[RMDB]
RNA sequence: GGGAACGACUCGAGUAGAGUCGAAAAGAUAUGGACGUAUGACAGGCGAGGAUCUGGUUGAUCGGAAACGAUCACCAGGGAGCCUGUAUACGUCCUAAGUCAAAAGGACGAAACUUCGGUUUCGUCCCGUGUUGGAUAUGUUCGCAUAUCCAACACGAAAAGAAACAACAACAACAAC
Reactivity to DMS in 0.01 (KOAc 150mM, MgCl2 10mM, bicine 150mM(pH8.5), 24C), signal-to-noise 3, nucleotides 027 to 126: g000a020u010a240u010g000g000a020c000g020u000a000u000g010a030c010a010g020g030c000g030a090g030g010a020u020c000u010g000g010u010u020g020a000u000c000g020g000a060a050a080c000g020a010u000c000a010c000c000a020g010g000g000a010g010c000c010u000g020u000a000u000a010c010g030u000c000c000u010a000a070g000u010c020a110a100a150a160g010g010a020c000g000a020a010a000c010u000u020c220g030g000u000u000u000c000g010u000c000c000
Reactivity to 2A3 in 0.01 (KOAc 150mM, MgCl2 10mM, bicine 150mM(pH8.5), 24C), signal-to-noise 3, nucleotides 027 to 126: g000a000u040a030u090g010g000a010c000g010u010a010u060g220a040c010a000g020g010c010g120a300g060g010a010u000c000u000g010g030u130u240g030a010u000c000g000g010a010a020a020c010g000a010u000c000a000c000c010a000g000g000g000a000g000c000c000u000g000u010a000u000a000c010g000u000c000c000u000a000a000g000u000c010a020a000a090a150g010g010a000c010g000a010a010a000c030u110u200c300g110g000u000u000u020c000g000u030c010c000

Chemical mapping of a 177-nucleotide RNA with DMS and 2A3.
DMS adducts were read by reverse transcription with MarathonRT.
The RNA was probed in 150 mM KOAc, 10 mM MgCl2 and 150 mM bicine (pH 8.5) at 24 C.
It was measured as part of the RMDB library TTRDES.